[RMDB]
RNA sequence: GGGAACGACUCGAGUAGAGUCGAAAAGCACCUCUGGCCAAUGAGACGCAGACUGGAAAAUGAUCCAUGUGGGGGAUUUCACCUCUUGCAGCUCGGAACAGACUCUUGGAUAAUGGUGUGGCCUAAGGGAUUCCGAUACCUUCGGGUAUCGGAAUCCAAAAGAAACAACAACAACAAC
Reactivity to 2A3 in 0.01 (KOAc 150mM, MgCl2 10mM, bicine 150mM(pH8.5), 24C), signal-to-noise 1, nucleotides 027 to 126: g060c000a050c090c000u000c060u000g070g030c000c000a120a120u270g000a000g000a000c120g000c060a110g000a150c000u040g000g040a000a090a060a000u060g010a040u000c040c020a020u000g030u020g000g000g010g000g140a030u280u080u100c090a110c000c010u000c000u000u170g020c010a050g070c040u040c080g020g000a010a010c000a030g070a060c000u000c000u100u120g040g000a110u000a110a120u250g030g000u000g070u060g000g000c000c050u000a060a060g020

This 177-nucleotide RNA was probed chemically with 2A3.
It was measured as part of the RMDB library OK1LIB.
The reactions ran in a buffer of 150 mM KOAc, 10 mM MgCl2 and 150 mM bicine (pH 8.5), at 24 C.
Reactivities are given for positions 27 through 126.